[RMDB]
RNA sequence: GGGAACGACUCGAGUAGAGUCGAAAAUGGAACAGGCAAUGGUGGAAACAAUGGAGGGGGCGGCAUGGACAACUUCACUAAAGCGUUGAUAGCAGGCGCUUUCAUCAUGGGCAUGGGCACCGGAGUGCACUACCAGGUGUUUCGACACCUGGUAGUGAAAAGAAACAACAACAACAAC
Reactivity to DMS in 0.01 (KOAc 150mM, MgCl2 10mM, bicine 150mM(pH8.5), 24C), signal-to-noise 3, nucleotides 027 to 126: u000g020g010a070a100c110a090g000g010c080a080a060u000g000g010u010g020g000a120a080a090c120a040a080u000g010g020a110g000g020g000g010g020c060g000g000c040a040u010g000g000a080c080a040a050c080u000u000c050a080c140u010a030a040a070g020c040g000u000u010g000a160u020a080g010c120a150g010g000c030g000c020u000u000u010c110a050u000c080a050u000g000g000g000c080a050u000g020g000g020c030a040c040c050g010g010a090g010u000g000
Reactivity to 2A3 in 0.01 (KOAc 150mM, MgCl2 10mM, bicine 150mM(pH8.5), 24C), signal-to-noise 1, nucleotides 027 to 126: u080g030g060a030a040c020a090g050g050c050a030a120u060g010g030u060g060g040a140a070a030c110a080a150u200g010g010a060g040g030g020g000g010c020g000g000c030a030u010g000g050a020c010a040a060c070u100u110c070a010c070u140a000a090a000g040c020g000u040u040g050a100u110a070g080c080a050g050g060c000g000c000u040u000u040c040a060u010c000a050u100g000g050g020c060a040u040g040g010g000c020a020c010c000g020g010a050g030u080g000